[RMDB]
RNA sequence: GGGAACGACUCGAGUAGAGUCGAAAAUUCUGUAAAGAGGAGACUGCUGGACUCGCCGCCCAAGUUCGAGACUGGGCCAUCUCCGAGCGAAGGGAGCGCGCUGGAAGGAUCAGCUCCCGAGAGGGGAAAACGGUAAAGAGCAUUGGAUCGUCGAAGGCAUGUCAUGUAUGUUCGCAUACAUGACAUGAAAAGAAACAACAACAACAAC
Reactivity to 2A3 in 0.01 (KOAc 150mM, MgCl2 10mM, bicine 150mM(pH8.5), 24C), signal-to-noise 4, nucleotides 027 to 156: u040u010c020u050g050u090a050a110a050g060a060g020g010a030g030a060c030u040g040c040u030g040g020a070c010u020c080g050c050c030g030c000c020c010a040a040g060u040u080c060g040a030g020a060c020u040g000g020g010c010c010a050u040c030u020c050c050g010a030g000c030g040a090a080g000g010g000a020g000c040g000c020g020c050u070g050g050a090a060g030g010a050u080c040a020g000c010u000c000c010c000g020a020g010a020g000g010g000g020a060a090a040a030c060g010g020u070a070a100a030g030a010g000c040a030u040u120g030g020a040u060c050g050u020c040g070a040a010g040g000
Reactivity to DMS in 0.01 (KOAc 150mM, MgCl2 10mM, bicine 150mM(pH8.5), 24C), signal-to-noise 2, nucleotides 027 to 156: u000u000c040u000g020u000a130a090a190g000a120g040g010a120g000a080c020u000g030c040u000g020g010a060c060u010c100g050c060c060g000c030c000c020a080a250g040u000u010c040g010a150g010a070c080u010g030g000g060c020c070a080u000c020u000c010c000g010a090g020c050g040a190a100g030g030g010a020g060c030g020c080g010c040u000g000g010a210a100g000g000a160u000c030a230g040c030u000c020c000c020g000a100g010a150g010g000g010g010a070a050a040a080c070g000g020u020a050a070a130g010a080g030c050a230u010u000g000g010a110u000c080g050u000c000g010a110a110g030g000